[RMDB]
RNA sequence: GGGAACGACUCGAGUAGAGUCGAAAAGAUAUGGAAUGGCCUUUUGACGGUCGAAGGAUCGGAAACGAUCCCUCUCGACCGAUAAGGCAUUCCUAAGUCAAAACGAGGCCUGUUCGCAGGCCUCGAACACAUAUACCUACUUCGGUAGGUAUAUGUGAAAAGAAACAACAACAACAAC
Reactivity to 2A3 in 0.01 (KOAc 150mM, MgCl2 10mM, bicine 150mM(pH8.5), 24C), signal-to-noise 7, nucleotides 027 to 126: g000a020u060a050u140g020g080a020a010u150g300g250c000c010u080u080u080u190g240a130c020g000g010u010c020g000a140a100g000g000a000u000c000g010g020a030a060a030c020g010a000u000c000c020c000u020c000u000c000g000a000c010c000g010a010u010a010a000g000g000c000a000u000u020c000c000u010a100a030g060u040c040a010a030a110a120c010g000a010g000g000c010c000u030g050u080u130c300g010c120a010g010g010c030c000u000c000g000a000a000
Reactivity to DMS in 0.01 (KOAc 150mM, MgCl2 10mM, bicine 150mM(pH8.5), 24C), signal-to-noise 7, nucleotides 027 to 126: g000a040u010a300u010g000g010a010a010u000g020g020c000c000u000u010u010u000g010a160c110g010g000u000c000g020a010a080g000g000a010u000c010g010g000a090a110a180c000g000a000u000c010c010c020u000c080u000c010g010a010c000c000g000a030u010a010a000g000g000c000a020u000u000c000c000u000a040a110g010u000c030a080a070a100a180c020g010a020g010g020c000c000u000g020u000u010c210g010c010a010g000g000c000c000u000c000g000a020a090
An RNA of 177 nucleotides, treated with 2A3 and DMS and read out base by base. Reactivities are given for positions 27 through 126. Conditions: 150 mM KOAc, 10 mM MgCl2 and 150 mM bicine (pH 8.5), 24 C.